[RMDB]
Chemical mapping of a 177-nucleotide RNA with 2A3 and DMS. The reactions ran in a buffer of 150 mM KOAc, 10 mM MgCl2 and 150 mM bicine (pH 8.5), at 24 C. 2A3 adducts were read by reverse transcription with SuperScript II with manganese. For 2A3, 1,204 sequencing reads were counted.

RNA sequence: GGGAACGACUCGAGUAGAGUCGAAAAGGACAGGUCGGUGAGCAGGAUGCUCGGCUUCGCGAGCGUGCACUGCGAUACCGCGAGGCCCGCCAUUGCGCAUUCGACGAUCGCGAGAUCGUCGGCGCGACGUAGCCGCAGGGUUCGCCCUGCGGCUACGAAAAGAAACAACAACAACAAC
Reactivity to 2A3 in 0.01 (KOAc 150mM, MgCl2 10mM, bicine 150mM(pH8.5), 24C), signal-to-noise 1, nucleotides 027 to 126: g030g030a050c010a040g090g130u300c010g020g040u020g040a020g000c010a000g020g060a020u040g000c000u000c020g070g060c140u250u160c190g050c000g050a050g000c000g040u080g000c060a020c250u000g000c000g010a030u060a040c010c010g000c010g010a050g080g000c010c000c010g000c000c030a080u150u200g000c040g000c060a090u040u220c000g000a020c000g000a000u010c010g000c000g100a020g000a060u000c010g000u010c060g010g010c020g000c010g000a000
Reactivity to DMS in 0.01 (KOAc 150mM, MgCl2 10mM, bicine 150mM(pH8.5), 24C), signal-to-noise 1, nucleotides 027 to 126: g000g000a060c050a080g010g000u010c030g000g040u000g010a260g020c020a030g000g010a130u000g010c030u000c000g000g010c290u010u000c180g030c010g060a040g000c000g000u040g010c140a260c000u000g010c000g000a230u020a040c030c000g000c100g000a130g040g020c010c010c030g010c020c070a250u010u020g020c010g000c000a270u000u020c030g040a020c000g000a000u000c000g020c290g000a190g000a010u000c000g020u000c000g000g000c060g000c010g000a060